[RMDB]
RNA sequence: GGGAACGACUCGAGUAGAGUCGAAAAGCGUCAUUGGUACUACAAAGUUCUACGGUGGCUGGGAUUUCAUGCUUAAAACAUUGUACAAAGAUGUUGAUAAUCCGCAUCUUAUGGGUUGGGAUUACCCUGGGAGUACUGUUCGCAGUACUCAAAAGAAACAACAACAACAAC
Reactivity to 2A3 in 0.01 (KOAc 150mM, MgCl2 10mM, bicine 150mM(pH8.5), 24C), signal-to-noise 9, nucleotides 027 to 129: g040c020g030u020c030a050u040u130g050g000u050a030c010u020a030c080a040a180a030g030u050u020c020u060a040c050g030g020u030g020g000c020u030g020g010g030a030u050u090u090c030a030u090g040c020u060u100a020a020a050a020c050a100u100u180g050u110a030c040a030a060a010g010a010u020g010u080u070g060a080u120a200a100u060c020c010g000c020a010u010c010u040u100a100u120g020g000g000u020u030g030g010g000a040u060u080a040c000c000c000u030g080g050
Reactivity to DMS in 0.01 (KOAc 150mM, MgCl2 10mM, bicine 150mM(pH8.5), 24C), signal-to-noise 9, nucleotides 027 to 129: g010c060g010u010c040a030u000u060g010g010u010a010c060u030a080c140a050a090a070g030u020u020c030u020a060c110g000g000u010g040g000c040u010g000g000g000a080u020u040u030c070a030u000g000c030u020u030a070a070a060a070c050a090u030u030g020u010a070c180a070a080a070g000a020u010g020u000u030g030a110u050a060a060u020c060c030g000c020a020u030c030u010u030a080u020g000g000g000u000u000g030g020g010a100u000u000a050c000c000c000u030g020g020

Chemical mapping of a 170-nucleotide RNA with 2A3 and DMS. High 2A3 reactivity points to a flexible backbone, as in loops and unpaired stretches. DMS adducts were read by reverse transcription with MarathonRT. Conditions: 150 mM KOAc, 10 mM MgCl2 and 150 mM bicine (pH 8.5), 24 C.